[RMDB]
RNA sequence: GGGAACGACUCGAGUAGAGUCGAAAAUUUCAUGUGGUGUCCUGGUGACGUAGUUCGCUGGACAUCACCGUCGGAAACCCUGCGAUACCCCGGCGAGAGUCUGCAGCAGGUUAGCCUAUCACCUGAUUCUAGCGAAGUCGCCAGUUGCCUUUCCGAGCGAAAGGUUAGAUUUCGAUCUAACCUUUCGAAAAGAAACAACAACAACAAC
Reactivity to 2A3 in 0.01 (KOAc 150mM, MgCl2 10mM, bicine 150mM(pH8.5), 24C), signal-to-noise 1, nucleotides 027 to 156: u090u120u190c090a080u090g010u020g000g040u020g050u050c070c110u160g020g030u060g010a020c080g130u110a110g020u070u000c020g020c020u000g000g000a000c000a000u010c000a000c000c000g190u040c010g000g090a080a100a100c060c010c000u010g050c020g100a150u070a140c060c000c040c000g000g000c020g020a020g000a000g050u030c060u150g000c060a000g010c020a010g040g050u040u100a020g060c020c050u160a130u110c010a030c020c010u040g030a020u150u110c080u040a040g020c010g070a060a000g060u050c020g000c000c000a010g020u050u110g030c020c000u000u060u040c000c000g000a020g020
Reactivity to DMS in 0.01 (KOAc 150mM, MgCl2 10mM, bicine 150mM(pH8.5), 24C), signal-to-noise 1, nucleotides 027 to 156: u010u000u020c050a190u000g050u000g010g010u000g000u000c020c010u000g050g020u000g020a040c060g000u000a070g000u010u000c030g090c000u000g000g020a050c050a010u000c000a040c020c070g060u000c050g010g000a140a070a090c040c030c020u000g000c060g000a170u010a100c050c010c000c000g020g020c030g040a140g020a120g030u010c050u020g000c290a190g030c010a090g040g010u000u010a090g020c040c030u030a150u000c070a050c040c010u000g030a070u010u000c040u010a090g000c010g020a050a070g020u010c010g000c000c040a140g020u000u020g000c010c220u000u000u000c020c020g020a300g010
Chemical mapping of a 207-nucleotide RNA with 2A3 and DMS. The 2A3 profile rests on 525 reads. For DMS, 2,297 sequencing reads were counted.